Structure probing data (2A3 and DMS) for a 177-nucleotide construct. Conditions: 150 mM KOAc, 10 mM MgCl2 and 150 mM bicine (pH 8.5), 24 C. For DMS the reverse transcriptase was MarathonRT. Values cover nucleotides 27 to 126. The data come from the RNA Mapping Database (RMDB), library OK1LIB.
[RMDB]
RNA sequence: GGGAACGACUCGAGUAGAGUCGAAAACUUCGAGAAGCACCAAAUCUUGCUCUUCCUCAAGUCACAGUGGGUGAAGAAAAUGGAGAAGCUAGGCGGACCCAAAAUCAAGGCCGGGCAAACCAUAGCCGGCGUGGAAGAGGUUCGCCUCUUCCACGCCAAAAGAAACAACAACAACAAC
Reactivity to 2A3 in 0.01 (KOAc 150mM, MgCl2 10mM, bicine 150mM(pH8.5), 24C), signal-to-noise 2, nucleotides 027 to 126: c060u070u120c050g120a080g000a080a190g020c060a060c020c140a070a000a230u020c020u010u160g010c000u050c000u160u090c000c020u020c010a000a200g050u060c020a020c050a140g040u050g000g060g000u140g040a050a090g090a040a080a020a010u220g030g000a020g100a000a070g100c190u130a040g060g010c020g040g010a080c000c020c000a080a000a000a000u160c070a000a060g020g010c000c020g000g020g000c000a020a130a000c080c000a110u040a060g150c090c120
Reactivity to DMS in 0.01 (KOAc 150mM, MgCl2 10mM, bicine 150mM(pH8.5), 24C), signal-to-noise 1, nucleotides 027 to 126: c030u000u000c050g000a140g000a010a150g050c100a180c040c020a080a180a010u000c030u000u000g000c210u000c150u000u000c000c000u000c000a040a140g030u000c090a010c150a000g010u000g000g000g080u000g000a030a270g000a000a000a060a120u000g000g000a040g000a000a080g040c190u180a000g000g000c000g000g000a000c050c100c040a120a150a190a260u080c050a070a130g000g000c000c000g000g000g000c040a000a090a210c270c130a090u050a030g030c000c050